[RMDB]
RNA sequence: GGGAACGACUCGAGUAGAGUCGAAAACUCCCAGCCCGUGGCGCGAGCCGUCUGCUCCAUUGCGACAACGAGCGAGACCCCGGCCGCGGGCGCCGCGGGACGGCCCGCGCGAGCGGGAGGACGGCGGGGUCCAGAGGUAAUUCGUUACCUCUGGACCAAAAGAAACAACAACAACAAC
Reactivity to DMS in 0.01 (KOAc 150mM, MgCl2 10mM, bicine 150mM(pH8.5), 24C), signal-to-noise 4, nucleotides 027 to 126: c180u000c000c000c020a150g010c000c000c010g040u000g020g010c030g020c040g010a110g040c080c150g000u000c030u010g010c040u010c030c170a210u050u010g000c060g020a090c070a130a100c270g010a020g020c020g000a080g000a100c030c070c040c020g020g010c020c030g000c060g030g010g010c050g000c030c020g020c070g010g010g010a100c070g000g000c000c000c010g000c010g000c210g020a110g020c010g010g000g000a250g000g010a140c030g000g000c050g000g010
Reactivity to 2A3 in 0.01 (KOAc 150mM, MgCl2 10mM, bicine 150mM(pH8.5), 24C), signal-to-noise 6, nucleotides 027 to 126: c040u010c000c000c000a010g010c000c000c010g030u020g020g000c080g000c020g130a020g040c040c030g020u010c030u040g030c020u000c020c030a200u130u300g090c060g100a070c070a140a040c060g020a020g030c020g020a060g020a100c020c010c010c000g040g010c010c010g030c020g000g000g000c000g000c000c000g000c010g040g000g010a020c020g110g040c000c000c000g000c000g000c020g010a020g010c000g010g000g010a010g020g010a020c030g080g020c010g000g050